RNA sequence: GGGAACGACUCGAGUAGAGUCGAAAACCUGGUUUAGGGUUCCAGGCUAGCCCUAUCUAUCGGUCGAGAUGCGAGCGCUUAAGCUCAAAUUGAGUGGCUGAGUUAGUGGUGAACGUAUCCCUAUUUUAAAACGGUAGCUGCUUCGGCAGCUACCGAAGUUCACUAACUGGUUCGCCAGUUAGUGAACAAAAGAAACAACAACAACAAC
Reactivity to 2A3 in 0.01 (KOAc 150mM, MgCl2 10mM, bicine 150mM(pH8.5), 24C), signal-to-noise 1, nucleotides 027 to 156: c000c000u030g010g050u040u080u070a070g000g020g020u110u040c020c010a000g010g010c000u010a030g000c000c000c030u000a010u010c000u010a190u030c000g000g000u000c010g030a020g000a120u000g000c020g010a000g000c060g000c220u270u290a170a050g000c000u020c000a010a010a000u010u020g010a010g010u200g020g000c000u000g000a000g010u000u010a030g000u080g240g000u070g000a070a030c060g000u060a040u050c010c000c010u000a090u000u190u020u110a090a110a000a010c000g000g040u000a030g000c030u000g000c010u020u050c110g090g000c010a020g000c000u000a000c000c000g000a000a000